[RMDB]
RNA sequence: GGGAACGACUCGAGUAGAGUCGAAAAGAACUUUGGCCGGCUCGGAAUAGAAUCAGGGGGUGCAAACUCCCCACUGGCAGAAAGGAUUAUAGCAAAUGCGUACCCUAUUGCAAUACAGCCCGGCCAACAUAGACUACUCUAUUCGUAGAGUAGUCAAUGUCAUCACACUGUUCGCAGUGUGAUGACAAAAAGAAACAACAACAACAAC
Reactivity to 2A3 in 0.01 (KOAc 150mM, MgCl2 10mM, bicine 150mM(pH8.5), 24C), signal-to-noise 1, nucleotides 027 to 156: g020a000a000c070u040u000u000g020g020c020c080g000g000c030u060c190g080g000a070a150u210a160g100a120a030u190c030a060g000g000g000g070g000u050g050c010a000a000a200c080u090c000c000c050c000a050c040u140g000g060c030a010g000a030a100a020g010g040a030u000u180a010u140a080g020c020a000a050a300u240g010c010g020u090a050c000c000c000u070a090u120u050g060c030a000a100u070a070c000a060g060c000c000c030g000g000c000c000a000a000c000a000u050a010g000a000c000u000a000c000u000c000u000a030u020u020c060g090u080a000g000a080g000u000a000g000u020c000a000a000